An RNA of 207 nucleotides, treated with 2A3 and DMS and read out base by base. The RNA was probed in 150 mM KOAc, 10 mM MgCl2 and 150 mM bicine (pH 8.5) at 24 C. For 2A3, 1,732 sequencing reads were counted.
[RMDB]
RNA sequence: GGGAACGACUCGAGUAGAGUCGAAAAAUUUUGACGCUGGGCCAUACGAGUCCUAUUUGUCAGCUUUACUGAAGCGCGCACGGUAAAGCUUGGAUUUAAUAAGGACUGGUAUGGCCUGUGCUGAAGCGCGCACGGCAACCGAAAGGUGCGGAAUUAACAUCUUAACUAUCUUCGGAUAGUUAAGAUGAAAAGAAACAACAACAACAAC
Reactivity to 2A3 in 0.01 (KOAc 150mM, MgCl2 10mM, bicine 150mM(pH8.5), 24C), signal-to-noise 2, nucleotides 027 to 156: a000u190u280u090u100g070a030c000g000c010u020g000g000g000c000c020a010u000a030c020g090a060g000u040c010c000u020a080u060u110u090g190u110c100a020g000c000u020u010u000a010c010u030g030a250a100g040c030g000c000g000c020a020c020g000g000u000a020a000a000g000c000u000u080g020g010a000u060u060u300a170a160u120a100a080g000g030a010c010u060g090g000u000a000u000g010g000c000c000u000g000u000g000c000u000g010a110a040g050c020g000c000g000c010a000c030g050g000c010a020a040c000c020g020a070a020a020g000g000u020g010c030g050g040a030a070u080u080a110a040
Reactivity to DMS in 0.01 (KOAc 150mM, MgCl2 10mM, bicine 150mM(pH8.5), 24C), signal-to-noise 2, nucleotides 027 to 156: a170u000u000u010u000g010a140c010g040c040u000g030g010g030c010c000a040u000a030c030g000a070g010u000c000c000u000a060u000u000u010g010u010c100a070g040c000u000u000u000a010c010u010g020a060a050g010c010g000c030g040c000a300c000g020g030u000a000a010a020g010c000u000u000g070g000a070u010u010u000a070a060u020a090a090g030g010a020c030u020g010g020u000a010u000g010g000c000c000u000g000u000g020c000u010g000a030a040g020c030g050c020g060c000a300c010g030g010c030a060a080c000c000g000a040a140a170g030g000u010g020c010g010g000a090a190u000u000a090a270